[RMDB]
RNA sequence: GGGAACGACUCGAGUAGAGUCGAAAACGUACAGCUCGCCGACGUCUUCGAUGGGCAGGCGCGCCGAUACCCGGAAACGCUUGUCGCCCAAGUCUUCCACCGGCGCCGUCUCGGCCUGGUCGUACUCCGCUUAGGGACAUUUCGAUGUCCCUAAGCGAAAAGAAACAACAACAACAAC
Reactivity to 2A3 in 0.01 (KOAc 150mM, MgCl2 10mM, bicine 150mM(pH8.5), 24C), signal-to-noise 2, nucleotides 027 to 126: c030g030u150a110c030a060g000c040u080c080g060c070c020g050a020c020g010u020c020u010u040c040g040a050u100g000g040g000c020a010g020g000c000g000c010g000c020c010g050a090u230a180c070c020c030g000g030a020a050a020c060g030c000u060u040g110u220c080g070c030c060c030a000a010g000u000c030u010u000c020c010a010c010c010g000g000c010g070c040c040g020u020c040u050c050g100g000c020c010u040g000g020u000c010g000u020a030c020u020c010
Reactivity to DMS in 0.01 (KOAc 150mM, MgCl2 10mM, bicine 150mM(pH8.5), 24C), signal-to-noise 3, nucleotides 027 to 126: c020g010u000a110c170a160g020c040u000c190g020c060c030g010a010c070g000u000c010u000u000c040g000a020u000g020g010g020c050a100g020g010c050g020c100g010c080c010g000a100u000a100c260c140c100g000g000a020a070a080c300g010c020u000u000g010u030c260g020c110c210c000a060a040g000u000c110u000u000c010c010a130c140c040g010g030c010g000c060c050g020u000c020u020c070g000g010c030c040u000g020g010u000c010g000u000a090c030u000c020